[RMDB]
RNA sequence: GGGAACGACUCGAGUAGAGUCGAAAAACUGUAGCUGGGGGAAGACAGUUUACUCAUUUGCUCUCUCCUUUCAUACAGUCAGCUGGUCCCUCUCCUCAGGUGUAGACCACCUAUUAUCAUUUUACCUUCUCAACUUUCCGUUCGCGGAAAGUUGAGAAAAAGAAACAACAACAACAAC
Reactivity to 2A3 in 0.01 (KOAc 150mM, MgCl2 10mM, bicine 150mM(pH8.5), 24C), signal-to-noise 1, nucleotides 027 to 126: a000c000u000g000u010a010g010c010u000g000g000g010g020g000a010a060g000a010c020a000g030u010u070u080a180c080u120c020a100u060u070u130g070c070u040c000u000c020u050c010c000u020u020u050c070a180u000a040c000a000g010u010c000a000g040c040u000g010g040u040c000c050c000u080c000u000c000c040u110c020a000g000g020u020g030u050a110g030a050c000c070a000c030c000u040a020u020u120a100u070c200a110u000u140u120u120a100c000c000u020